[RMDB]
RNA sequence: GGGAACGACUCGAGUAGAGUCGAAAAACAACACGCUUCGGCGUGUUGUCGACGGAGGAAGCUGAGGACGCCCUUGUGCCGCAGCAGGGAAGCGCAGCGUAAAUCAGAGGUGAUUCGUCACCUCUAAUUGUGAUUACGCGUUCGCGCGUAAUCACAAAAAAGAAACAACAACAACAAC
Reactivity to DMS in 0.01 (KOAc 150mM, MgCl2 10mM, bicine 150mM(pH8.5), 24C), signal-to-noise 1, nucleotides 027 to 126: a060c000a000a010c010a000c000g020c000u000u020c200g000g000c000g000u000g000u000u010g000u010c030g000a070c160g000g050a060g000g000a170a050g020c010u000g000a120g010g030a160c050g010c020c030c030u000u010g010u010g010c040c090g000c060a080g010c010a110g000g000g010a100a050g000c030g000c030a050g010c030g010u000a050a050a100u010c100a030g000a000g000g010u000g000a020u000u010c140g020u000c000a000c000c010u000c000u000a000a030